[RMDB]
Structure probing data (DMS and 2A3) for a 207-nucleotide construct. Reactivities are given for positions 27 through 156.
RNA sequence: GGGAACGACUCGAGUAGAGUCGAAAAACCAAGCACGGCAUCACACAUUGUGUGUGAUGAGUGUGGCUGAGUUAAUGCACUCGGGUAAGGUAACAACCCCCAUGUCAAGAGGACCGACCUGCAGCCAAGCCUUUGGUUAUACCAAGGGUGCUGUUCACUAGUGUUAGUCGUUCGCGACUAACACUAGAAAAGAAACAACAACAACAAC
Reactivity to DMS in 0.01 (KOAc 150mM, MgCl2 10mM, bicine 150mM(pH8.5), 24C), signal-to-noise 1, nucleotides 027 to 156: a060c010c010a130a280g060c010a070c000g000g030c010a010u000c000a020c020a000c000a300u010u020g020u000g090u000g030u000g010a010u000g010a010g010u000g080u000g020g030c000u000g000a080g010u060u010a060a140u000g020c050a090c010u000c020g000g020g040u000a060a040g000g040u000a100a100c060a070a210c030c010c000c020c040a100u010g030u000c090a130a080g000a120g010g000a090c060c050g000a050c050c060u000g010c020a050g020c020c060a080a160g000c000c010u010u010u010g000g050u000u000a100u000a300c000c000a000a070g000g000g030u000g040c010u000g010u000u000c040a200
Reactivity to 2A3 in 0.01 (KOAc 150mM, MgCl2 10mM, bicine 150mM(pH8.5), 24C), signal-to-noise 2, nucleotides 027 to 156: a000c000c010a000a020g010c000a000c020g200g000c060a000u000c000a000c020a010c010a100u200u300g120u130g010u000g000u000g260a000u000g000a010g010u050g020u070g040g000c020u020g000a010g080u030u070a180a060u150g050c060a000c010u030c000g000g010g050u130a260a070g060g030u080a230a060c060a020a170c030c000c000c000c010a060u060g060u060c090a120a000g010a020g080g100a040c030c000g020a050c030c010u070g000c000a000g000c030c030a080a010g000c000c000u020u000u000g030g010u180u150a100u110a150c000c000a000a000g010g000g030u060g030c020u020g010u090u090c040a000
Conditions: 150 mM KOAc, 10 mM MgCl2 and 150 mM bicine (pH 8.5), 24 C.